The data come from the RNA Mapping Database (RMDB), library M2PK50. The record gives the reactivity of an RNA of 177 nucleotides to 2A3 and DMS. The reactions ran in a buffer of 150 mM KOAc, 10 mM MgCl2 and 150 mM bicine (pH 8.5), at 24 C. 2A3 adducts were read by reverse transcription with SuperScript II with manganese.

[RMDB]
RNA sequence: GGGAACGACUCGAGUAGAGUCGAAAACAGCAAUUAUUCGUAAUUGCUGAAUGCCGGACCCAGCGCGGAAGGAGCGCGCAGGACUCCUUCGCCGCCUUUUAAUAAGCAGGUACUUCGGUACCUGCAAUGGUAUAGUGGGUUUCGACCCACUAUACCAAAAAGAAACAACAACAACAAC
Reactivity to 2A3 in 0.01 (KOAc 150mM, MgCl2 10mM, bicine 150mM(pH8.5), 24C), signal-to-noise 1, nucleotides 027 to 126: c000a000g000c000a000a050u020u010a000u060u120c180g010u000a000a000u010u000g000c020u000g000a050a040u050g020c000c010g030g040a030c000c040c010a010g010c020g000c040g090g030a030a000g000g030a000g000c100g000c020g040c120a020g030g210a200c000u010c000c000u010u000c040g060c030c020g010c020c000u130u260u140u100a160a250u230a210a060g000c000a010g000g000u010a000c000u010u050c160g120g010u010a000c000c000u000g000c000a000a000
Reactivity to DMS in 0.01 (KOAc 150mM, MgCl2 10mM, bicine 150mM(pH8.5), 24C), signal-to-noise 2, nucleotides 027 to 126: c010a030g010c000a000a000u000u000a000u000u000c130g030u020a000a010u000u000g000c000u000g000a060a060u000g000c060c070g020g000a200c030c020c010a150g010c070g010c030g010g020a030a020g010g010a030g010c050g000c170g010c190a080g000g000a190c010u000c020c000u000u000c050g010c130c070g030c050c040u020u010u010u020a070a170u010a100a090g000c000a010g010g000u000a010c000u000u010c120g040g020u000a000c000c000u010g010c000a010a000